[RMDB]
RNA sequence: GGGAACGACUCGAGUAGAGUCGAAAAAUCCUCAGGUUCAUAGGCGUGAUGAUUGGGUGUUCAUGCUCCAUGCAUGACAUGUGCCUCCUUUGAACCUUGUUACGACCUUGGCACAUUACCCAUCUGAAAAAGACGUUCGCGUUCGCGCGAACGUCAAGAGAAGGUAACAGUUCGCUGUUACCUUCUCAAAAGAAACAACAACAACAAC
Reactivity to DMS in 0.01 (KOAc 150mM, MgCl2 10mM, bicine 150mM(pH8.5), 24C), signal-to-noise 1, nucleotides 027 to 156: a110u000c000c000u000c090a050g000g000u000u000c010a040u000a060g020g020c140g000u000g000a100u000g010a110u000u060g010g040g070u000g010u000u010c000a000u000g000c040u000c170c190a150u000g020c000a040u000g050a020c300a170u010g000u000g000c000c000u000c020c010u000u010u000g000a020a000c020c030u000u020g000u000u000a110c170g020a110c190c090u010u020g000g070c000a040c020a140u000u000a050c000c010c010a000u010c010u010g020a120a050a090a140a150g000a060c020g000u000u000c020g010c000g010u000u020c300g070c010g000c060g000a000a000c000g000u000c000a000a080
Reactivity to 2A3 in 0.01 (KOAc 150mM, MgCl2 10mM, bicine 150mM(pH8.5), 24C), signal-to-noise 3, nucleotides 027 to 156: a000u020c000c000u010c020a010g010g000u000u000c000a000u010a010g030g000c050g110u080g070a070u060g010a040u160u270g030g000g020u030g040u050u050c010a010u000g000c010u040c170c080a090u290g000c000a000u000g020a010c020a040u030g010u000g010c000c000u010c000c000u000u000u000g010a000a000c000c000u010u070g070u030u120a100c080g060a130c030c090u080u150g010g000c000a000c000a000u050u120a020c000c000c000a000u000c020u040g020a090a070a030a060a040g010a000c000g000u000u000c000g020c000g020u070u060c210g000c000g000c000g140a000a000c000g000u000c000a000a000